[RMDB]
RNA sequence: GGGAACGACUCGAGUAGAGUCGAAAAUAUGAUGAUCGGAUCCUGAUCCAUGGAUCCAUGUGAUCCGUACGCUCUAGGACACUCGCUCUAGGAUCGUGUGCUCUGUGCUGAUCAGUACCAUGCUAGGAACUGUAAAGGAAUUCGUUCCUUUACAGUUAAAAGAAACAACAACAACAAC
Reactivity to 2A3 in 0.01 (KOAc 150mM, MgCl2 10mM, bicine 150mM(pH8.5), 24C), signal-to-noise 9, nucleotides 027 to 126: u270a080u090g110a030u040g020a030u090c060g000g010a030u030c000c010u040g030a060u020c040c040a090u140g050g010a000u000c010c020a010u130g040u050g010a020u000c010c010g010u030a030c060g020c020u040c050u110a040g020g040a010c010a010c040u040c020g030c010u020c030u090a080g110g070a070u030c020g010u030g000u010g030c010u000c020u050g050u020g020c040u040g010a040u040c010a000g000u020a050c030c020a050u120g050c020u080a050g040g100
Reactivity to DMS in 0.01 (KOAc 150mM, MgCl2 10mM, bicine 150mM(pH8.5), 24C), signal-to-noise 9, nucleotides 027 to 126: u010a070u010g010a090u010g000a080u000c060g010g000a060u000c040c020u000g010a060u000c050c160a100u000g020g010a020u000c030c120a040u010g020u010g000a010u000c000c030g020u000a100c180g010c070u000c060u010a060g010g010a070c050a050c050u000c060g010c080u000c030u010a140g010g000a040u000c020g010u000g010u000g010c050u000c030u000g010u000g010c040u000g000a050u000c030a040g010u010a160c050c030a080u000g010c080u000a100g000g010
Record summary
Source: RMDB library OK2TRN, as collected in RNAgym. This 177-nucleotide RNA was probed chemically with 2A3 and DMS. 2A3 adducts were read by reverse transcription with SuperScript II with manganese. The DMS profile rests on 62,478 reads. The reactions ran in a buffer of 150 mM KOAc, 10 mM MgCl2 and 150 mM bicine (pH 8.5), at 24 C.